[RMDB]
RNA sequence: GGGAACGACUCGAGUAGAGUCGAAAAUCAACUGGUUAUGAUUGCGUUGCUAACUGGCAAAUAUUUUCGCUCAUAACAUCUGGAAUGAUGCCAAAAGAAAGGGUGCCUAUCGUCCACCAGACCGAUAUGGAGAAAGGGAUUUCGAUCCCUUUCUCCAAAAAGAAACAACAACAACAAC
Reactivity to DMS in 0.01 (KOAc 150mM, MgCl2 10mM, bicine 150mM(pH8.5), 24C), signal-to-noise 3, nucleotides 027 to 126: u020c040a050a110c080u030g000g000u020u000a070u040g020a060u040u020g030c060g020u000u000g010c020u000a110a100c130u030g000g000c000a020a070a120u030a040u000u020u000u010c070g010c100u000c140a030u020a050a060c140a060u010c030u040g010g000a030a060u010g000a060u030g000c040c040a060a050a050a110g000a100a040a030g010g000g000u010g000c060c040u010a030u010c040g000u000c110c160a100c060c050a110g000a150c090c020g010a100u000a090
Reactivity to 2A3 in 0.01 (KOAc 150mM, MgCl2 10mM, bicine 150mM(pH8.5), 24C), signal-to-noise 3, nucleotides 027 to 126: u050c000a000a060c050u070g000g010u010u010a000u070g000a010u080u130g040c110g040u000u030g040c040u040a080a150c080u090g010g000c010a000a040a000u120a130u040u040u110u190c040g050c060u040c050a010u070a070a100c040a060u140c090u050g060g000a120a040u030g030a000u050g000c010c010a050a090a020a000g250a040a040a000g110g050g060u090g020c000c010u030a010u020c010g010u050c000c020a010c000c000a060g040a070c000c030g000a000u020a090